[RMDB]
RNA sequence: GGGAACGACUCGAGUAGAGUCGAAAACUGUAACAGCACAGUGAACCACUAUGUCACCACUGUGUUGCACAGCACUGUGACCCCACAGUGGAGCUUUGUGAUACCACAGUGGAGCACUGCGACACAACCUAUUUAAUUUAUUCGUAAAUUAAAUAGGAAAAGAAACAACAACAACAAC
Reactivity to DMS in 0.01 (KOAc 150mM, MgCl2 10mM, bicine 150mM(pH8.5), 24C), signal-to-noise 9, nucleotides 027 to 126: c030u000g010u000a160a140c120a080g010c060a040c010a010g010u000g000a080a090c040c170a100c160u010a080u010g010u000c060a150c040c020a030c010u000g010u000g010u000u000g010c050a010c020a030g010c100a070c090u000g010u000g000a180c090c100c210c020a070c020a030g010u000g010g010a160g020c120u010u000u010g020u000g010a150u010a080c120c040a020c040a040g020u000g000g000a150g010c010a020c040u000g010c040g010a120c090a060c130a080a150
Reactivity to 2A3 in 0.01 (KOAc 150mM, MgCl2 10mM, bicine 150mM(pH8.5), 24C), signal-to-noise 9, nucleotides 027 to 126: c010u020g040u100a140a050c020a100g050c050a000c010a020g010u010g040a060a040c020c020a050c110u190a150u230g080u090c050a040c160c000a000c010u000g000u000g000u010u020g000c010a000c000a010g070c030a030c100u040g030u140g270a300c030c030c030c000a010c000a010g000u030g010g080a070g050c050u150u260u190g070u060g040a090u100a160c030c030a020c020a040g000u020g020g000a010g010c020a020c070u080g010c030g100a010c040a000c000a090a070